RNA sequence: GGGAACGACUCGAGUAGAGUCGAAAAAGGCAUUCGUGCCUACAAAAACCUUUGUGCCAGAUGGAGUACUGUAGGUGCGUCCACCCAUUGGGUGGACGAACUACACCGAAAGUACGUUGAAAUCUGGCACUCUGGUGUCCGCAGCCUUCGGGCUGAACUAAUCUACCUCCUUCGGGAGGUAGAUUAGAAAAGAAACAACAACAACAAC
Reactivity to 2A3 in 0.01 (KOAc 150mM, MgCl2 10mM, bicine 150mM(pH8.5), 24C), signal-to-noise 2, nucleotides 027 to 156: a000g010g000c020a020u060u160c240g110u080g010c000c010u050a090c110a030a150a040a030a020c000c010u010u010u000g000u000g000c000c000a000g000a020u010g000g010a000g010u010a000c010u010g020u080a020g010g000u000g000c000g000u010c000c000a000c000c030c150a300u240u300g000g000g030u000g010g010a000c000g000a000a000c000u060a030c010a000c000c000g050a120a000a000g010u000a000c000g010u040u000g000a000a000a000u000c000u010g000g020c000a000c000u000c010u010g000g020u030g050u030c040c040g020c010a010g010c010c020u110u160c290g080g000g000c010u000g000a040a000
Reactivity to DMS in 0.01 (KOAc 150mM, MgCl2 10mM, bicine 150mM(pH8.5), 24C), signal-to-noise 1, nucleotides 027 to 156: a010g000g000c020a100u000u000c120g020u010g040c060c000u000a160c060a070a100a160a120a050c000c050u000u000u000g020u010g050c040c010a010g030a080u000g000g000a240g030u000a010c000u010g000u010a300g020g030u000g040c020g030u000c000c010a000c020c000c020a300u000u010g060g020g120u010g000g010a030c030g000a030a100c040u010a070c010a000c000c030g000a190a300a060g000u000a010c000g000u000u000g000a070a140a020u000c040u000g010g000c050a020c020u000c010u000g000g090u000g010u010c010c070g000c020a070g020c000c020u010u000c300g080g070g030c000u000g040a050a200